[RMDB]
RNA sequence: GGGAACGACUCGAGUAGAGUCGAAAACGCUCUAGAGUACGAUCCAUGGUACGUCAUGGAUCCGCUAGAGGAUCGUACGAGCGAUCACUCAUGGGAUCAGUACUCUGCGAUCUCCAUGCGACAUGACAUGGCCGUAGCAGUUCGCUGCUACGGCCAUAAAAGAAACAACAACAACAAC
Reactivity to DMS in 0.01 (KOAc 150mM, MgCl2 10mM, bicine 150mM(pH8.5), 24C), signal-to-noise 1, nucleotides 027 to 126: c180g050c040u020c020u000a020g000a020g020u000a000c140g010a010u000c000c000a060u000g000g000u000a190c290g030u020c000a000u000g000g000a000u000c010c040g000c040u000a040g000a000g000g010a020u000c020g050u000a030c230g020a110g030c020g000a010u020c020a060c030u000c300a150u000g000g030g030a020u010c030a140g020u000a120c070u010c050u000g000c000g010a030u000c030u000c010c050a050u000g010c040g000a100c080a020u020g010a100c190
Reactivity to 2A3 in 0.01 (KOAc 150mM, MgCl2 10mM, bicine 150mM(pH8.5), 24C), signal-to-noise 1, nucleotides 027 to 126: c070g040c040u000c010u060a010g000a000g160u090a100c040g010a020u050c000c030a040u000g000g050u260a180c180g070u070c110a000u010g010g000a070u040c000c000g000c010u040a050g000a040g050g000a000u020c000g020u050a090c230g030a010g060c040g000a010u040c060a020c170u030c100a100u160g010g090g030a000u020c050a060g060u090a090c020u000c030u050g000c000g010a010u000c030u000c060c000a000u070g070c020g050a150c040a150u130g000a020c010
Annotation: An RNA of 177 nucleotides, treated with DMS and 2A3 and read out base by base. The data come from the RNA Mapping Database (RMDB), library OK2TRN. For 2A3 the reverse transcriptase was SuperScript II with manganese. The RNA was probed in 150 mM KOAc, 10 mM MgCl2 and 150 mM bicine (pH 8.5) at 24 C.